Description: Source: RMDB library OK3TST, as collected in RNAgym. Structure probing data (DMS and 2A3) for a 207-nucleotide construct. The RNA was probed in 150 mM KOAc, 10 mM MgCl2 and 150 mM bicine (pH 8.5) at 24 C. For DMS the reverse transcriptase was MarathonRT. The 2A3 profile rests on 6,773 reads. The DMS profile rests on 10,234 reads.
[RMDB]
RNA sequence: GGGAACGACUCGAGUAGAGUCGAAAAUUAUAUACACUUAGACUAACUUAGAUUCAGUUGUAGACAGGAAUUUUAGUAACACAUGAGUAAGAAAUGCUCCAUUGCACUUAUUUUGAGUUAUAUGGUAACAUAUUUGCAUACUGGUGUCUAUACAUGAACGUAAAUACUCAUUCGUGAGUAUUUACGUAAAAGAAACAACAACAACAAC
Reactivity to DMS in 0.01 (KOAc 150mM, MgCl2 10mM, bicine 150mM(pH8.5), 24C), signal-to-noise 4, nucleotides 027 to 156: u000u000a110u010a150u000a120c070a090c060u000u000a140g000a120c050u000a080a090c060u000u000a050g020a090u010u010c040a050g000u000u000g030u000a060g020a080c040a080g020g010a090a100u000u000u000u000a100g010u000a020a040c040a060c060a090u000g000a080g030u010a020a080g000a070a060a050u000g010c010u000c070c280a140u000u000g030c040a110c020u000u000a060u000u000u000u000g020a130g020u000u010a060u000a040u000g010g020u000a040a120c040a080u000a070u000u000u000g010c020a090u000a050c070u000g020g010u000g010u000c060u010a080u010a060c090a110u000g010a110
Reactivity to 2A3 in 0.01 (KOAc 150mM, MgCl2 10mM, bicine 150mM(pH8.5), 24C), signal-to-noise 7, nucleotides 027 to 156: u120u020a060u020a010u030a110c010a010c050u070u110a040g060a050c040u070a100a010c020u050u060a030g020a070u080u060c040a030g040u050u030g070u100a070g020a090c060a060g060g050a040a020u050u040u080u110a080g020u060a070a000c020a000c010a120u090g030a010g050u050a090a010g030a070a110a030u070g000c010u020c050c020a060u040u110g000c030a010c020u030u050a050u090u150u070u130g040a030g010u040u050a100u010a020u110g040g020u030a050a010c010a020u090a100u060u070u110g010c020a010u020a130c020u020g030g000u020g000u010c040u050a080u020a070c050a080u120g080a070